[RMDB]
An RNA of 177 nucleotides, treated with 2A3 and DMS and read out base by base. The data come from the RNA Mapping Database (RMDB), library OK2TRN. The RNA was probed in 150 mM KOAc, 10 mM MgCl2 and 150 mM bicine (pH 8.5) at 24 C.
RNA sequence: GGGAACGACUCGAGUAGAGUCGAAAACGGAUGGCAGGUUUGGGAACCGCUGCCUUUCAGGAAAGGUGCUGACGUGGGCCACUGCCGCUUCGCUGGGAAGCAAUGGGCCCAGCUAGGCCCGGGGCGCCCAAGUCCCAAUAUUCGUAUUGGGACUUGGAAAAGAAACAACAACAACAAC
Reactivity to 2A3 in 0.01 (KOAc 150mM, MgCl2 10mM, bicine 150mM(pH8.5), 24C), signal-to-noise 4, nucleotides 027 to 126: c020g030g020a070u090g020g020c020a030g030g060u130u260u240g180g060g060a060a050c030c020g040c080u020g010c010c020u010u040u020c100a090g060g130a110a030a010g060g010u160g070c080u070g030a060c060g060u060g000g010g020c010c010a220c110u060g030c040c070g010c020u020u010c020g050c130u160g060g150g020a020a010g020c040a030a090u080g050g050g000c000c020c000a000g000c020u020a010g010g010c000c010c010g000g000g000g020c050g000c010
Reactivity to DMS in 0.01 (KOAc 150mM, MgCl2 10mM, bicine 150mM(pH8.5), 24C), signal-to-noise 7, nucleotides 027 to 126: c090g000g000a040u010g010g020c020a050g010g000u000u000u010g020g000g000a110a070c080c060g010c060u000g000c010c010u000u010u000c080a170g010g010a060a050a060g010g010u000g010c080u000g010a080c190g010u000g010g010g010c010c010a070c030u010g010c150c100g010c030u010u000c080g020c140u010g000g010g000a050a030g010c050a100a100u010g000g010g010c000c010c020a020g010c040u000a160g000g000c000c010c020g000g000g000g010c180g010c140